Structure probing data (2A3 and DMS) for a 177-nucleotide construct.
[RMDB]
RNA sequence: GGGAACGACUCGAGUAGAGUCGAAAAGAUAUGGAGAUGAACUACAUUUGGCCCGUUGAAAGCUUUCGGAAACGAAAGCUGGAGGGAAUGCAUCUCCUAAGUCAAAACCAAGCGUUCGCGCUUGGAACAGUAAGCAAUUCUUCGGAAUUGCUUACUGAAAAGAAACAACAACAACAAC
Reactivity to 2A3 in 0.01 (KOAc 150mM, MgCl2 10mM, bicine 150mM(pH8.5), 24C), signal-to-noise 4, nucleotides 027 to 126: g000a000u020a010u040g010g000a000g010a010u030g040a140a150c070u280a090c200a300u230u190u300g300g050c010c010c010g060u110u010g000a020a010a000g010c000u000u000u020c010g000g000a000a020a000c000g000a000a000a000g000c000u000g000g010a000g020g000g050a030a050u140g050c010a010u000c000u000c020c000u010a010a000g010u010c020a080a010a010a150c000c010a000a000g010c010g030u060u170c300g000c010g000c130u010u010g000g000a030a030
Reactivity to DMS in 0.01 (KOAc 150mM, MgCl2 10mM, bicine 150mM(pH8.5), 24C), signal-to-noise 4, nucleotides 027 to 126: g000a010u000a030u010g000g000a020g020a020u000g010a100a120c210u000a170c200a140u000u010u010g020g010c000c000c000g010u000u010g000a200a140a040g000c000u000u000u000c000g000g010a000a000a020c010g010a000a000a010g000c000u000g020g010a010g010g020g010a080a070u000g000c010a010u000c000u000c000c000u000a010a050g000u000c010a060a050a120a210c000c010a000a020g000c000g010u000u010c260g010c010g020c000u000u000g000g010a040a080
For 2A3 the reverse transcriptase was SuperScript II with manganese.